[RMDB]
RNA sequence: GGGAACGACUCGAGUAGAGUCGAAAAGGAGGUGGAGAUGCCAUGCCGACCCGAAGAGGAAAGAAGAACUCGGACGCGAACCGUGAGUGGAACCCUGAUCCUUUAUUGGGGAGUACACUCGAGGAGUCGCUACAAUAUUGUUCGCAAUAUUGUAGCGAAAAGAAACAACAACAACAAC
Reactivity to DMS in 0.01 (KOAc 150mM, MgCl2 10mM, bicine 150mM(pH8.5), 24C), signal-to-noise 2, nucleotides 027 to 126: g030g010a070g000g040u000g020g010a130g000a080u000g030c050c010a080u000g030c030c020g020a080c000c000c020g000a110a070g000a080g000g020a060a070a040g000a100a140g000a120a050c070u000c090g030g000a090c080g000c070g000a140a090c030c030g010u000g010a000g000u000g000g000a120a300c010c010c000u000g000a000u000c300c260u000u000u000a040u040u000g020g010g000g000a040g000u020a160c010a010c010u000c020g000a070g010g000a060g020u000
Reactivity to 2A3 in 0.01 (KOAc 150mM, MgCl2 10mM, bicine 150mM(pH8.5), 24C), signal-to-noise 1, nucleotides 027 to 126: g030g010a020g030g020u050g010g040a130g000a080u100g060c010c010a030u050g040c010c000g050a050c060c010c010g000a050a010g000a010g030g050a080a060a050g060a040a000g000a030a040c000u010c050g000g000a010c020g000c040g040a010a040c000c030g060u080g020a000g010u010g010g010a030a010c000c000c000u000g010a020u120c020c120u180u130u160a030u060u020g000g000g000g000a020g000u000a000c010a000c010u000c000g000a040g050g010a030g040u060
An RNA of 177 nucleotides, treated with DMS and 2A3 and read out base by base.
For DMS, 820 sequencing reads were counted.
It was measured as part of the RMDB library 15KREP.